RNA sequence: GGGAACGACUCGAGUAGAGUCGAAAACACUGGUGUACCGGCUGUUCGAAAGAGCACGUGCCGGGCAGCCACGCACCACGGGGUAAGAGCUGAACGCAUCUAAGCUCGAAACCCACCUGGAAACGAGACAACCCCAUUAGUUCGCUAAUGGGGUUGUAAAAGAAACAACAACAACAAC
Reactivity to 2A3 in 0.01 (KOAc 150mM, MgCl2 10mM, bicine 150mM(pH8.5), 24C), signal-to-noise 3, nucleotides 027 to 126: c080a040c070u040g000g000u000g010u070a070c020c030g000g000c000u000g000u000u020c000g120a190a150a090g140a040g010c050a020c300g070u140g020c000c000g000g000g000c020a000g020c000c020a050c100g000c000a000c000c010a040c060g010g000g000g020u040a100a020g000a000g000c000u010g040a160a060c130g010c080a050u070c040u070a050a000g000c000u000c000g000a070a010a010c000c000c010a030c000c020u000g040g050a070a090a080c090g010a080g000
Reactivity to DMS in 0.01 (KOAc 150mM, MgCl2 10mM, bicine 150mM(pH8.5), 24C), signal-to-noise 3, nucleotides 027 to 126: c110a170c130u010g000g000u000g000u010a170c150c060g000g000c000u000g010u000u010c040g000a130a070a130g000a090g000c050a030c160g030u010g030c130c000g000g000g050c040a090g030c000c010a180c090g000c050a040c000c000a070c190g010g010g000g020u000a090a210g000a010g000c000u000g000a090a200c190g000c080a040u000c010u010a270a060g000c000u020c000g000a040a170a050c000c000c000a170c050c040u010g020g000a030a070a100c080g000a150g010